[RMDB]
RNA sequence: GGGAACGACUCGAGUAGAGUCGAAAAACCCCUUCAGCGAACAGAAGGGCUCCUCCUCCUCGGGAGUAGGCCCGUAGCGAUGGGGAGGGAUGCUAGGAGUUGGGGGAGACCGAAGCGAGGAGGAAAGCACAAUAUGUCUCUUCGGAGACAUAUUGUGAAAAGAAACAACAACAACAAC
Reactivity to 2A3 in 0.01 (KOAc 150mM, MgCl2 10mM, bicine 150mM(pH8.5), 24C), signal-to-noise 1, nucleotides 027 to 126: a000c070c020c010c000u060u060c010a110g000c010g150a070a030c020a100g050a050a090g070g020g000c040u000c000c000u050c000c000u000c000c000u000c020g050g080g010a050g040u040a040g120g000c040c020c030g000u050a000g030c020g130a170u210g000g000g000g080a050g010g040g010a050u160g060c000u030a070g120g000a110g050u200u140g020g000g040g010g030a000g020a030c020c020g010a050a010g060c040g000a010g000g000a000g030g030a070a020a040g030
Reactivity to DMS in 0.01 (KOAc 150mM, MgCl2 10mM, bicine 150mM(pH8.5), 24C), signal-to-noise 2, nucleotides 027 to 126: a060c160c010c000c020u000u000c010a100g040c060g020a080a080c090a110g010a060a110g010g010g010c080u000c070c020u000c000c000u000c010c030u000c040g020g030g010a060g030u000a070g010g020c020c020c040g040u000a090g010c020g000a150u010g000g000g030g020a070g000g000g010a090u000g000c110u040a110g030g000a070g010u000u000g020g000g000g000g010a090g010a080c030c040g000a080a110g060c040g020a030g040g000a060g010g030a070a080a100g000
Source information:
Source: RMDB library 15KREP, as collected in RNAgym. The record gives the reactivity of an RNA of 177 nucleotides to 2A3 and DMS. The reactions ran in a buffer of 150 mM KOAc, 10 mM MgCl2 and 150 mM bicine (pH 8.5), at 24 C. Values cover nucleotides 27 to 126. For DMS the reverse transcriptase was MarathonRT.